[RMDB]
RNA sequence: GGGAACGACUCGAGUAGAGUCGAAAAAGUUCGCGCUUCCGUGAAACGCGAAAAUCGGACUGUGGCUGCAAGUCGCAUCGCAAAACCGCGGCAAGUGGAGUUAGCGAGAGGAGGCUGGGUUUUGGCUAGAACACACGGUACUUCGGUACCGUGUGAAUCAAAUCACUUGUUUCGACAAGUGAUUUGAAAAAGAAACAACAACAACAAC
Reactivity to 2A3 in 0.01 (KOAc 150mM, MgCl2 10mM, bicine 150mM(pH8.5), 24C), signal-to-noise 2, nucleotides 027 to 156: a000g100u050u020c010g000c000g010c060u100u000c060c020g130u060g060a090a030a040c040g010c010g030a040a010a000a030u120c060g010g010a040c040u030g020u040g090g020c000u080g020c090a100a030g000u020c000g010c060a010u060c030g010c060a050a100a040a060c050c040g010c020g090g000c140a140a030g020u070g050g040a060g020u090u140a040g010c020g020a040g020a040g090g010a000g030g040c050u050g000g000g000u010u040u110u040g010g000c010u000a020g080a190a010c000a000c000a000c020g010g010u000a000c000u020u060c160g090g000u000a000c000c000g010u000g000u000g000a000a000
Reactivity to DMS in 0.01 (KOAc 150mM, MgCl2 10mM, bicine 150mM(pH8.5), 24C), signal-to-noise 2, nucleotides 027 to 156: a070g000u000u000c010g030c000g020c010u000u000c020c110g040u010g010a070a030a020c010g040c000g000a010a020a080a060u000c110g040g010a060c070u000g000u000g010g060c000u000g030c050a060a120g020u010c050g000c060a160u030c070g020c080a120a060a110a080c040c070g010c000g020g030c050a070a100g030u000g000g020a140g020u000u000a100g000c000g010a070g010a080g010g010a050g000g030c020u010g010g010g020u000u000u000u020g000g040c050u000a110g010a110a210c010a050c000a030c000g010g020u020a000c000u000u010c260g040g010u000a000c010c000g060u000g000u020g020a030a120
Structure probing data (2A3 and DMS) for a 207-nucleotide construct. Conditions: 150 mM KOAc, 10 mM MgCl2 and 150 mM bicine (pH 8.5), 24 C. For DMS, 3,043 sequencing reads were counted.